Structure probing data (DMS and 2A3) for a 177-nucleotide construct. It was measured as part of the RMDB library RFMREP. The RNA was probed in 150 mM KOAc, 10 mM MgCl2 and 150 mM bicine (pH 8.5) at 24 C. For 2A3 the reverse transcriptase was SuperScript II with manganese. For 2A3, 4,025 sequencing reads were counted.
RNA sequence: GGGAACGACUCGAGUAGAGUCGAAAAGCCCACGGGCUCCGGGACGCAUCACCAAACGGUGGUCAGCCCGAAAGUCUCGCUUCGGCAAACACACGACACGGUAGGGGAGCGGCGAGUAGGCCGCAAGCAUUCUGUUCUUGUUCGCAAGAACAGAAUGAAAAGAAACAACAACAACAAC
Reactivity to DMS in 0.01 (KOAc 150mM, MgCl2 10mM, bicine 150mM(pH8.5), 24C), signal-to-noise 4, nucleotides 027 to 126: g000c000c010c070a180c090g010g000g010c010u000c160c040g000g000g020a080c070g000c200a020u010c000a010c010c020a090a120a160c220g000g020u000g000g000u000c060a190g000c020c000c000g000a040a050a030g010u000c000u000c090g000c150u010u000c070g000g020c020a070a070a090c110a070c090a100c030g000a050c100a080c090g010g010u000a080g000g000g010g010a120g010c000g000g010c010g000a090g030u010a130g010g010c000c020g020c030a060a060g000
Reactivity to 2A3 in 0.01 (KOAc 150mM, MgCl2 10mM, bicine 150mM(pH8.5), 24C), signal-to-noise 2, nucleotides 027 to 126: g050c030c010c000a020c030g020g000g010c010u020c030c000g020g010g050a040c040g020c050a010u040c010a010c030c000a300a240a080c140g000g000u020g000g010u000c000a010g030c010c000c020g010a030a020a010g030u010c050u040c100g060c040u040u070c030g040g030c060a070a150a020c030a010c010a020c100g090a020c030a010c090g010g040u070a030g010g000g000g030a070g000c010g030g000c040g000a110g170u130a080g030g160c000c000g000c020a010a010g050